[RMDB]
This 207-nucleotide RNA was probed chemically with 2A3 and DMS.

RNA sequence: GGGAACGACUCGAGUAGAGUCGAAAAUCACCAGGCUGCCUUGCUUACAGUUGCCCCUGAGGUGAUGCUUCUGUGAUGCCUAAUGUCAGGUGGCAACUCAUCCUUACUGUCUAGUACUCCACACCGAUGCUUGUCACUAGUAAUGGCUGGUCGCAGGAAAUGUCUUCUAAUUCGUUAGAAGACAUUUAAAAGAAACAACAACAACAAC
Reactivity to 2A3 in 0.01 (KOAc 150mM, MgCl2 10mM, bicine 150mM(pH8.5), 24C), signal-to-noise 9, nucleotides 027 to 156: u060c010a020c020c000a010g030g000c020u020g020c010c010u080u090g020c020u080u160a090c050a050g000u010u010g000c010c000c000c000u010g010a020g000g080u060g020a080u090g030c020u080u110c070u140g190u100g070a070u130g020c010c020u090a110a040u120g100u140c000a010g000g010u040g140g020c000a000a010c010u000c010a070u060c000c020u070u100a100c030u040g060u080c020u030a020g020u020a080c040u010c030c020a050c010a050c050c060g040a040u090g020c040u040u060g030u040c010a020c070u040a020g040u090a090a060u120g050g000c020u020g030g020u050c040g000c040a010g030g050
Reactivity to DMS in 0.01 (KOAc 150mM, MgCl2 10mM, bicine 150mM(pH8.5), 24C), signal-to-noise 7, nucleotides 027 to 156: u000c030a110c020c010a160g010g000c010u000g020c020c150u000u010g020c030u000u000a100c050a060g020u000u000g010c010c000c020c040u000g000a070g020g030u000g010a120u000g010c040u000u000c060u000g020u010g010a100u010g020c030c040u000a140a080u000g000u000c020a090g010g020u010g030g010c000a020a020c030u000c040a080u000c030c040u000u000a090c040u000g010u000c040u000a100g010u000a070c040u000c020c040a070c040a090c050c010g010a100u010g010c130u000u000g010u000c030a070c030u000a140g020u010a080a070u000g020g010c040u000g010g010u000c050g010c040a120g010g000

Source information: The RNA was probed in 150 mM KOAc, 10 mM MgCl2 and 150 mM bicine (pH 8.5) at 24 C.